[RMDB]
RNA sequence: GGGAACGACUCGAGUAGAGUCGAAAAAGACGGAAACCCAUCGACUGUCACCAGAUGCUGCAUCACCUGAUCACUGAUGGCUCAACGGUAUCCGGCGGCACAACUGAAUACUUGUAGCUGCCUUUUGAAAAGGAGUUCAUCUUCGGAUGAACUCCAACCACUGAAUAGUCUUCGGACUAUUCAGUGGAAAAGAAACAACAACAACAAC
Reactivity to DMS in 0.01 (KOAc 150mM, MgCl2 10mM, bicine 150mM(pH8.5), 24C), signal-to-noise 1, nucleotides 027 to 156: a140g000a080c010g010g000a090a050a090c040c010c040a090u000c020g010a130c030u010g050u000c020a060c040c000a050g030a050u000g030c020u000g030c040a170u010c090a010c000c010u020g020a180u000c090a210c110u010g020a090u000g020g020c010u000c020a110a030c030g080g000u000a030u000c020c000g020g050c010g040g030c030a070c120a070a190c090u000g020a100a140u000a070c060u010u010g010u000a090g010c000u020g010c000c110u000u010u000u040g000a040a080a180a180g040g040a010g030u000u000c000a000u000c000u000u000c300g010g010a030u000g010a020a000c000u000c010c010a040a020
Reactivity to 2A3 in 0.01 (KOAc 150mM, MgCl2 10mM, bicine 150mM(pH8.5), 24C), signal-to-noise 5, nucleotides 027 to 156: a000g050a020c070g040g020a070a090a040c030c020c010a050u060c050g100a070c030u060g030u070c010a020c060c020a040g020a090u050g030c010u050g020c020a040u030c020a050c020c010u050g030a070u080c040a010c030u050g010a030u050g050g010c020u040c070a040a100c060g060g010u060a090u060c050c050g000g000c010g000g000c000a000c000a030a060c050u190g080a140a080u150a150c060u030u050g030u030a040g000c010u020g010c000c010u110u140u060u100g090a060a040a030a040g000g000a000g000u000u010c000a000u010c000u050u070c160g060g010a000u000g000a000a000c000u000c000c000a000a000